[RMDB]
RNA sequence: GGGAACGACUCGAGUAGAGUCGAAAAGCUGCAUCAAGGGAUAAGGUGACAUCGCUAAGCGCUAACGGAAUUUGUAGAUGCGCAAAUCCUAAAGGCUCAAACCGACUCCAUUGUUGCCCGGGCAACUGGAUACGCUUAAACCAGCGAGACGUAAACGACAUCUCUUUACUUUCGAGUAAAGAGAUGUAAAAGAAACAACAACAACAAC
Reactivity to DMS in 0.01 (KOAc 150mM, MgCl2 10mM, bicine 150mM(pH8.5), 24C), signal-to-noise 3, nucleotides 027 to 156: g020c100u000g060c040a070u010c060a080a070g030g010g010a100u010a100a100g030g030u000g030a090c040a100u000c060g000c030u000a050a160g030c050g030c040u010a090a200c120g000g000a050a070u010u000u010g010u000a060g000a090u000g010c080g040c020a030a050a050u000c020c010u010a080a090a200g000g030c030u010c050a040a110a130c060c050g000a100c060u000c020c010a250u000u000g020u000u010g000c000c090c060g000g010g010c060a090a040c020u000g000g010a160u000a080c100g010c040u020u010a060a080a130c020c020a050g000c040g000a150g000a070c040g030u000a070a060a140c020g010
Reactivity to 2A3 in 0.01 (KOAc 150mM, MgCl2 10mM, bicine 150mM(pH8.5), 24C), signal-to-noise 6, nucleotides 027 to 156: g010c010u010g030c010a040u030c040a070a070g040g020g000a040u070a110a070g070g000u040g050a080c040a080u060c060g010c070u090a100a040g040c020g010c150u050a050a050c050g080g050a110a130u010u000u030g040u040a090g030a160u140g050c040g000c050a020a040a000u020c000c000u100a130a100a010g020g000c000u030c090a080a080a060c020c010g020a040c060u000c010c000a040u020u060g030u020u010g010c000c030c020g050g040g000c000a040a020c030u030g010g000a070u080a140c070g010c020u080u130a090a020a060c040c010a030g030c020g030a030g010a030c060g080u100a060a080a040c050g040
Chemical mapping of a 207-nucleotide RNA with DMS and 2A3. For 2A3 the reverse transcriptase was SuperScript II with manganese. The data come from the RNA Mapping Database (RMDB), library OK3TST. DMS adducts were read by reverse transcription with MarathonRT. The DMS profile rests on 4,545 reads. Reactivities are given for positions 27 through 156.